[RMDB]
RNA sequence: GGGAACGACUCGAGUAGAGUCGAAAAGCGAGGUUAAAGUUAUUAGCGACGGCCUUGAAUGACGCAUUAUAUCUAGCGCAAUAAGCAGCAUAAUACGUGUCAAAGUUUGUCCUGUAGAUAUCAACCAUUUGUAAAAAUCGCAAUACGCUAAUGGGGAAAGAAUAUCUGUCUUCGGACAGAUAUUCUUAAAAGAAACAACAACAACAAC
Reactivity to 2A3 in 0.01 (KOAc 150mM, MgCl2 10mM, bicine 150mM(pH8.5), 24C), signal-to-noise 3, nucleotides 027 to 156: g060c030g010a010g050g020u080u080a170a100a030g030u060u050a110u070u090a150g010c030g050a030c050g000g000c000c000u010u030g070a070a070u120g040a070c020g000c040a020u100u040a040u030a070u100c060u110a110g000c010g000c100a070a200u180a280a060g000c020a010g000c000a010u040a040a020u070a100c070g030u010g010u030c030a040a050a060g030u080u100u160g030u070c000c000u020g030u040a000g050a080u080a020u130c020a030a050c040c030a060u030u030u130g080u060a030a070a020a040a000u090c030g000c030a040a050u080a100c030g000c020u030a070a000u050g000g010g030g030a100
Reactivity to DMS in 0.01 (KOAc 150mM, MgCl2 10mM, bicine 150mM(pH8.5), 24C), signal-to-noise 2, nucleotides 027 to 156: g000c040g000a080g040g070u000u000a050a100a170g010u010u000a100u000u000a120g060c090g020a060c010g010g000c020c020u000u010g050a060a080u000g000a060c030g000c000a050u010u000a010u000a060u010c050u000a200g070c020g000c050a150a120u000a230a300g000c000a060g010c110a030u000a010a050u000a030c100g030u020g000u000c010a020a030a050g000u000u010u000g020u000c000c020u010g020u000a120g030a120u000a070u010c090a040a060c030c000a150u000u000u000g030u000a010a060a020a070a150u000c060g000c040a050a160u000a050c060g000c020u000a040a080u000g010g010g010g020a120
This 207-nucleotide RNA was probed chemically with 2A3 and DMS. DMS adducts were read by reverse transcription with MarathonRT.